[RMDB]
Chemical mapping of a 177-nucleotide RNA with DMS and 2A3. The DMS profile rests on 3,132 reads. DMS adducts were read by reverse transcription with MarathonRT. The RNA was probed in 150 mM KOAc, 10 mM MgCl2 and 150 mM bicine (pH 8.5) at 24 C.

RNA sequence: GGGAACGACUCGAGUAGAGUCGAAAAGUGAGGAUGCGAGACGUCAAGUGCUACCAGGGGACCGACAUCGUCCGUGGUUGCGAUCCGUUGGUGAAGCCCGUUGGCAGACAGGCCUGUGAUCUGCAGCUCCCGUACGUAGUUUCGACUACGUACGGGAAAAAGAAACAACAACAACAAC
Reactivity to DMS in 0.01 (KOAc 150mM, MgCl2 10mM, bicine 150mM(pH8.5), 24C), signal-to-noise 3, nucleotides 027 to 126: g010u010g010a120g010g000a060u000g010c080g010a090g000a100c080g000u000c070a090a070g000u010g020c030u000a050c050c020a070g010g010g010g000a030c040c000g000a070c100a040u000c080g010u000c140c130g020u000g040g020u000u000g010c010g000a030u000c040c060g020u000u000g010g010u010g010a120a100g020c040c000c100g040u010u010g010g020c040a080g000a080c070a070g000g000c050c020u000g000u000g000a060u010c030u020g000c050a110g000c120
Reactivity to 2A3 in 0.01 (KOAc 150mM, MgCl2 10mM, bicine 150mM(pH8.5), 24C), signal-to-noise 1, nucleotides 027 to 126: g080u070g000a050g040g000a050u030g040c070g060a020g000a080c030g020u020c040a020a090g080u040g070c020u030a040c030c010a000g130g010g040g030a000c030c060g080a020c000a090u070c030g060u040c020c010g060u040g000g000u000u110g000c030g000a030u020c030c050g130u010u000g000g000u070g110a090a040g000c000c000c000g070u070u180g080g000c040a000g000a050c030a020g040g030c010c080u060g050u050g020a100u040c010u040g000c000a010g010c020